Structure probing data (2A3) for a 177-nucleotide construct.
The reactions ran in a buffer of 150 mM KOAc, 10 mM MgCl2 and 150 mM bicine (pH 8.5), at 24 C.
RNA sequence: GGGAACGACUCGAGUAGAGUCGAAAACGGGCUGAAACCCGCCCGCAUGAAGCUGGAUUCGGUAGUAAUCGCGUGUCAGAAGCGCGCGGUGAAUACGUCCCUGCUCCUUGCACACACCGCCCGUCAAGUUUGCGUUACGCUUCGGCGUAACGCAAACAAAAGAAACAACAACAACAAC
Reactivity to 2A3 in 0.01 (KOAc 150mM, MgCl2 10mM, bicine 150mM(pH8.5), 24C), signal-to-noise 1, nucleotides 027 to 126: c030g010g030g000c000u100g060a100a030a000c000c000c000g000c000c010c000g060c000a030u040g050a020a000g000c000u010g020g000a270u080u020c030g000g000u000a010g060u000a030a000u010c020g000c050g000u000g040u050c140a100g060a300a000g070c000g020c000g020c000g000g000u000g000a000a080u090a140c010g000u010c000c000c000u030g010c000u020c010c010u060u010g000c010a030c010a000c010a050c020c010g050c000c050c010g000u080c110a000a270